Chemical mapping of a 207-nucleotide RNA with 2A3 and DMS.
For DMS, 2,669 sequencing reads were counted.
RNA sequence: GGGAACGACUCGAGUAGAGUCGAAAAACUGAUGUUGUGUCACCAUUUAGUGAACAUAUAAUAAGUAAGUGGAAGGUAGACUAUCAGGGCACAGCGUAUAUUGUAUGUGUUGAAUUUUCACAAGGGAAGAGAGUAUGCGAUGUAGUCUCUGAUAGCACCUCGAGGAUAUAUUCGUAUAUCCUCGAGGAAAAGAAACAACAACAACAAC
Reactivity to 2A3 in 0.01 (KOAc 150mM, MgCl2 10mM, bicine 150mM(pH8.5), 24C), signal-to-noise 8, nucleotides 027 to 156: a000c090u120g040a090u090g050u050u010g010u010g040u050c030a020c040c020a050u040u050u060a190g060u090g100a150a010c050a020u240a020u110a240a120u130a140a030g120u030a030a020g000u020g050g040a060a070g110g050u100a030g030a070c000u000a000u000c000a010g000g010g000c010a000c000a010g000c010g010u010a010u000a010u010u080g150u140a190u070g030u010g040u030u080g100a230a260u110u130u140u150c030a030c010a040a050g120g030g020a080a050g070a020g000a010g070u010a000u010g000c010g010a010u000g010u020a160g020u060c060u000c000u100g000a010u000a000g000c010a020
Reactivity to DMS in 0.01 (KOAc 150mM, MgCl2 10mM, bicine 150mM(pH8.5), 24C), signal-to-noise 1, nucleotides 027 to 156: a100c090u010g000a160u000g000u010u020g010u020g010u010c020a120c020c000a130u000u000u000a060g010u010g000a120a180c120a100u020a060u010a070a110u000a140a120g010u010a050a070g000u000g010g000a110a110g010g000u020a180g000a090c000u000a050u000c000a070g030g020g030c000a040c000a060g020c010g040u000a050u010a020u000u010g040u000a120u030g010u020g000u000u000g060a110a270u010u010u000u000c060a040c100a050a180g020g030g000a050a110g000a130g010a060g040u000a040u000g010c000g000a080u010g020u000a040g030u000c000u000c020u000g000a060u020a000g020c000a080

The reactions ran in a buffer of 150 mM KOAc, 10 mM MgCl2 and 150 mM bicine (pH 8.5), at 24 C.